Structure probing data (2A3 and DMS) for a 207-nucleotide construct. DMS adducts were read by reverse transcription with MarathonRT. For 2A3, 3,664 sequencing reads were counted.
RNA sequence: GGGAACGACUCGAGUAGAGUCGAAAAGAUGUCAUUUGGUAAGGCUAUAUCAGGUGGCACUACAGGUACUAUGACGCAUCAUGGUGCUUGUGAACUCGUAGCUUGAUGCGUCAAGUUAUGAGUGAUCUAUUUUACUAUAGCCUUAGUGAGAUAGAGACGUAUUAGCUGCUUUCGAGCAGCUAAUACGAAAAGAAACAACAACAACAAC
Reactivity to 2A3 in 0.01 (KOAc 150mM, MgCl2 10mM, bicine 150mM(pH8.5), 24C), signal-to-noise 3, nucleotides 027 to 156: g130a060u020g000u000c000a010u000u000u030g010g020u020a020a040g080g040c070u050a020u000a000u130c010a000g000g030u010g010g010c000a000c020u090a050c010a040g070g000u060a010c010u050a040u070g060a050c100g060c160a150u050c000a000u080g030g000u010g040c030u020u050g050u050g060a030a030c010u010c020g000u010a010g010c000u010u010g000a010u030g050c090g090u010c000a000a000g010u010u040a040u050g020a020g010u040g050a020u000c000u000a030u000u010u000u020a020c020u010a000u030a070g040c000c000u000u020a010g010u010g020a000g000a030u020a020g020a000g000a010
Reactivity to DMS in 0.01 (KOAc 150mM, MgCl2 10mM, bicine 150mM(pH8.5), 24C), signal-to-noise 2, nucleotides 027 to 156: g030a100u010g020u000c020a030u000u000u010g030g010u000a010a020g000g040c060u000a090u000a040u020c010a050g010g020u000g000g000c010a020c030u000a120c030a040g050g000u000a050c040u000a080u000g020a120c160g020c120a070u010c020a190u000g000g020u010g020c000u000u000g030u000g000a080a070c030u010c010g050u000a030g010c020u000u000g000a050u010g040c270g020u000c020a010a030g000u010u000a010u010g000a030g000u000g000a160u000c010u000a030u000u000u000u000a050c030u000a030u000a070g000c070c070u000u000a000g010u000g000a010g000a040u000a020g000a100g010a290